The data come from the RNA Mapping Database (RMDB), library OK2TRN. This 177-nucleotide RNA was probed chemically with DMS and 2A3. The 2A3 profile rests on 1,765 reads. For DMS, 1,141 sequencing reads were counted. For DMS the reverse transcriptase was MarathonRT. Conditions: 150 mM KOAc, 10 mM MgCl2 and 150 mM bicine (pH 8.5), 24 C.
RNA sequence: GGGAACGACUCGAGUAGAGUCGAAAACACGCCUUCGCGAUAGGACGGCAGCACGACGCAAUCGGCGCGGGCGAUGUGCGGCCGCACGUCGUGCGCCUCGCCGAGGUAAUCGAUCACGCCUUCGCGAUCGAUCACCGACUUUCGAGUCGGUGAUCGAAAAAGAAACAACAACAACAAC
Reactivity to DMS in 0.01 (KOAc 150mM, MgCl2 10mM, bicine 150mM(pH8.5), 24C), signal-to-noise 2, nucleotides 027 to 126: c140a110c300g010c030c030u010u010c090g040c000g010a040u000a050g020g000a090c070g010g030c090a120g040c080a060c010g000a040c000g000c170a140a190u010c010g000g000c010g010c120g010g000g010c080g000a030u010g050u020g000c000g020g040c170c110g000c260a030c000g030u000c000g020u000g040c070g010c010c030u010c030g060c000c000g010a030g000g020u010a240a060u010c010g000a030u030c100a100c030g020c120c040u000u000c040g000c050g000a010
Reactivity to 2A3 in 0.01 (KOAc 150mM, MgCl2 10mM, bicine 150mM(pH8.5), 24C), signal-to-noise 2, nucleotides 027 to 126: c060a040c080g050c000c000u030u020c010g000c000g020a070u170a140g090g060a200c000g060g020c100a080g060c040a020c050g040a010c030g080c200a070a060u050c000g000g000c040g000c060g070g070g050c050g000a040u050g020u020g050c010g160g210c090c170g030c040a010c000g010u020c000g070u040g050c060g080c050c010u040c020g020c020c020g000a020g020g040u160a070a000u070c030g050a160u070c000a000c050g100c020c000u050u060c020g020c000g010a010